[RMDB]
RNA sequence: GGGAACGACUCGAGUAGAGUCGAAAACGCAGCUCUCGGCCCUGCUGGUGGCCUGGCAGGAGGCGUCCGGUAUCUCUGUGGGGGAAUAGCGAGCCUCUGCCUCCUCCUCGAUAACGAGGAGCAAGCGGAGGCUAUCGAAUACGACUUGCUGGUCAUGACUUUCCUACACAUUCGUGUGUAGGAAAGUAAAAGAAACAACAACAACAAC
Reactivity to 2A3 in 0.01 (KOAc 150mM, MgCl2 10mM, bicine 150mM(pH8.5), 24C), signal-to-noise 2, nucleotides 027 to 156: c040g000c030a040g010c030u020c020u030c050g110g000c000c000c020u050g030c060u040g040g000u050g060g050c000c010u010g060g000c020a030g000g030a050g030g000c030g000u000c060c020g040g040u100a090u020c010u000c010u070g000u070g070g000g000g000g000a040a020u040a070g070c050g020a010g000c000c010u000c010u010g010c000c040u040c000c000u000c000c020u010c000g100a180u160a300a170c040g000a020g000g000a010g000c010a000a060g010c000g000g000a000g000g000c000u000a000u000c000g030a010a010u100a040c060g010a020c040u010u050g040c040u030g000g050u050c030a070u160g010
Reactivity to DMS in 0.01 (KOAc 150mM, MgCl2 10mM, bicine 150mM(pH8.5), 24C), signal-to-noise 1, nucleotides 027 to 156: c080g020c040a070g020c010u000c060u000c100g050g030c020c000c000u000g010c030u000g020g010u000g010g000c110c000u010g000g070c000a090g010g020a070g020g010c050g020u000c030c020g020g020u000a040u000c060u000c010u020g020u000g030g050g030g040g030a100a070u000a090g020c020g020a100g000c000c000u020c010u000g000c010c000u030c230c000u000c000c000u000c010g010a160u000a080a290c100g020a030g030g020a010g050c060a030a120g050c010g020g030a050g010g020c000u000a000u000c000g000a090a120u010a110c080g000a120c030u000u010g010c040u010g000g020u020c060a140u000g000